The record gives the reactivity of an RNA of 177 nucleotides to 2A3 and DMS. DMS adducts were read by reverse transcription with MarathonRT. Values cover nucleotides 27 to 126. 2A3 adducts were read by reverse transcription with SuperScript II with manganese. Conditions: 150 mM KOAc, 10 mM MgCl2 and 150 mM bicine (pH 8.5), 24 C. The data come from the RNA Mapping Database (RMDB), library OK1LIB.
RNA sequence: GGGAACGACUCGAGUAGAGUCGAAAAGCACGUCGUUACGACGACGUGCAAGAAAACAAAAGGAGUGGCGACGUCUGGCCACAGUGAAUCAAACAGACGAAAAGCAUGGUGGUACGCCACCAUGCAAACUAAAUUAGGUAUUCGUACCUAAUUUAGUAAAAGAAACAACAACAACAAC
Reactivity to 2A3 in 0.01 (KOAc 150mM, MgCl2 10mM, bicine 150mM(pH8.5), 24C), signal-to-noise 9, nucleotides 027 to 126: g010c000a000c000g010u010c000g010u020u080a080c300g030a010c000g000a000c000g090u000g020c010a000a000g000a010a060a010a010c150a020a090a060a040g240g050a190g020u010g010g000c040g050a130c000g030u000c000u010g000g000c000c010a000c010a010g050u080g090a030a040u130c070a050a020a040c000a000g010a000c000g020a080a020a010a010g000c000a000u000g000g000u010g000g030u040a040c280g060c020c000a000c000c000a000u000g000c000a000a000
Reactivity to DMS in 0.01 (KOAc 150mM, MgCl2 10mM, bicine 150mM(pH8.5), 24C), signal-to-noise 5, nucleotides 027 to 126: g000c010a000c010g010u020c000g020u020u010a080c200g040a080c000g000a010c000g040u000g020c010a020a040g000a090a060a150a120c150a050a040a140a120g040g020a140g030u000g020g010c000g000a090c000g010u000c010u000g010g010c000c000a010c010a070g010u070g010a130a050u050c170a010a040a060c030a020g000a010c000g000a140a060a110a100g010c000a000u010g020g030u010g000g030u000a060c290g000c020c000a020c010c000a000u000g000c030a010a010